[RMDB]
RNA sequence: GGGAACGACUCGAGUAGAGUCGAAAAGGCGAAGGUGUGCCCGUUAGCCAAGGUGUGGAUGGUACAUACCAGCAUGGCUAUUGGCUCCGCACACAGCGUAAUUUUACCAAGGGUGGCAAGUCGUUGACUGCUAACCCGCGCUGGUAUUUUUACUACACCCCAAGAUAGUGUUCGCACUAUCUUGGGGAAAAGAAACAACAACAACAAC
Reactivity to 2A3 in 0.01 (KOAc 150mM, MgCl2 10mM, bicine 150mM(pH8.5), 24C), signal-to-noise 3, nucleotides 027 to 156: g090g010c090g060a090a030g130g000u010g000u030g060c020c000c000g000u010u040a020g010c030c000a020a070g090g000u060g020u030g000g030a300u120g110g060u230a110c030a110u110a050c030c000a010g120c040a060u080g020g000c010u110a180u060u080g000g000c010u000c100c000g020c010a010c000a000c000a000g020c000g010u020a020a010u020u010u070u000a010c000c000a020a030g000g000g000u000g010g020c140a230a150g040u000c110g300u180u270g020a000c000u010g000c000u050a190a110c000c000c000g020c030g010c050u000g020g000u000a020u030u050u010u010u010a010c010u020a030c030a050